[RMDB]
RNA sequence: GGGAACGACUCGAGUAGAGUCGAAAAAGACGGAAACCCAUCGACUGUCACCAGAUGCUGCAUCACCUGAUCACUGAUGGCUCAACGGUAACCGGCGGUACAACUGAAUACUUGUAGCUGCCUUUUGAAAAGGAGUUCAUCUUCGGAUGAACUCCAAGAUAUGUAUUGUGUUCGCACAAUACAUAUCAAAAGAAACAACAACAACAAC
Reactivity to 2A3 in 0.01 (KOAc 150mM, MgCl2 10mM, bicine 150mM(pH8.5), 24C), signal-to-noise 9, nucleotides 027 to 156: a010g060a020c050g040g030a060a080a030c030c000c000a030u060c040g090a080c030u070g020u070c020a010c040c020a020g030a110u080g030c060u060g020c030a040u040c010a030c010c020u060g050a060u060c030a020c060u050g020a030u040g070g000c020u020c050a060a090c050g020g030u040a050a040c040c030g010g000c010g010g000u010a010c010a040a010c040u170g080a150a060u130a180c040u040u050g020u040a040g120c020u010g000c000c000u090u120u060u100g120a080a080a030a030g000g000a000g010u000u000c000a000u000c000u030u070c160g080g000a000u000g000a000a000c000u000c000c000a000a000
Reactivity to DMS in 0.01 (KOAc 150mM, MgCl2 10mM, bicine 150mM(pH8.5), 24C), signal-to-noise 3, nucleotides 027 to 156: a070g060a080c070g000g020a060a140a110c050c010c040a120u010c020g020a110c020u000g020u000c020a100c030c060a090g010a070u000g000c030u010g030c060a090u000c030a030c030c010u010g020a110u000c060a080c070u010g000a100u000g010g020c030u000c040a110a110c060g000g010u000a060a130c040c040g000g030c030g050g000u000a040c060a050a120c070u030g020a120a110u010a080c070u020u000g020u010a060g010c010u000g000c010c140u000u000u010u000g000a100a100a140a180g000g010a030g010u000u000c000a010u000c000u000u000c300g020g030a010u000g000a000a010c000u000c000c000a000a020